Chemical mapping of a 177-nucleotide RNA with DMS.
DMS adducts were read by reverse transcription with MarathonRT.
The RNA was probed in 150 mM KOAc, 10 mM MgCl2 and 150 mM bicine (pH 8.5) at 24 C.
RNA sequence: GGGAACGACUCGAGUAGAGUCGAAAAAAAAAGAUAUGGACGAGAGCGCUCAUCGAUCUAUGGUGAGGCUAUAUCGGAAACGAUAUAGACAAACCAUAGGGAGAGCCCUCUCGUCCUAAGUCAAAAACCACUUUCUUAUCUUCGGAUAAGAAAGUGGAAAAGAAACAACAACAACAAC
Reactivity to DMS in 0.01 (KOAc 150mM, MgCl2 10mM, bicine 150mM(pH8.5), 24C), signal-to-noise 1, nucleotides 027 to 126: a110a040a060a160a010g000a000u000a140u000g000g010a020c010g000a010g000a000g060c300g050c000u000c000a230u000c150g000a110u000c000u000a000u020g000g010u020g000a300g000g020c000u020a000u000a000u020c000g000g000a080a000a050c020g020a000u000a000u010a000g000a020c000a040a220a020c000c000a000u040a000g000g000g000a020g010a010g010c000c300c030u000c000u000c000g040u000c000c000u000a000a060g000u000c000a050a110a050a180a110